Chemical mapping of a 177-nucleotide RNA with DMS and 2A3.
[RMDB]
RNA sequence: GGGAACGACUCGAGUAGAGUCGAAAAAGCGAGUACGCUCGCAUUGUACCUGAUGAUAAGUUUAAUCUGAACAAAGUGCUGUUGAUUCACAACUUAAAAUUAAACCAAAAGGAUUCUGAAAUCAAAAAGACUUAGAUCAGUUCGCUGAUCUAAGUCUAAAAGAAACAACAACAACAAC
Reactivity to DMS in 0.01 (KOAc 150mM, MgCl2 10mM, bicine 150mM(pH8.5), 24C), signal-to-noise 1, nucleotides 027 to 126: a010g070c000g040a000g010u010a200c300g000c010u030c000g060c000a200u010u000g010u090a110c110c000u000g000a130u000g000a160u060a010a240g000u000u000u000a030a000u000c070u000g030a050a140c180a200a000a030g000u000g010c060u000g040u000u000g010a240u040u000c140a170c060a070a100c070u000u060a000a070a060a000u000u010a030a000a030c170c030a040a000a110a060g000g000a160u000u000c100u000g050a040a080a100u090c090a040a060a140a090
Reactivity to 2A3 in 0.01 (KOAc 150mM, MgCl2 10mM, bicine 150mM(pH8.5), 24C), signal-to-noise 2, nucleotides 027 to 126: a000g000c000g000a000g000u030a070c300g000c070u000c000g000c040a070u000u080g030u030a000c000c030u080g090a050u040g000a020u040a150a010g080u000u010u010a000a030u060c030u060g120a070a020c030a170a060a000g040u080g100c100u080g150u220u120g050a220u190u130c070a010c070a020a120c000u030u070a080a000a000a090u060u130a010a130a100c020c060a080a080a000a000g060g000a000u020u030c030u140g080a130a080a110u000c100a040a200a090a060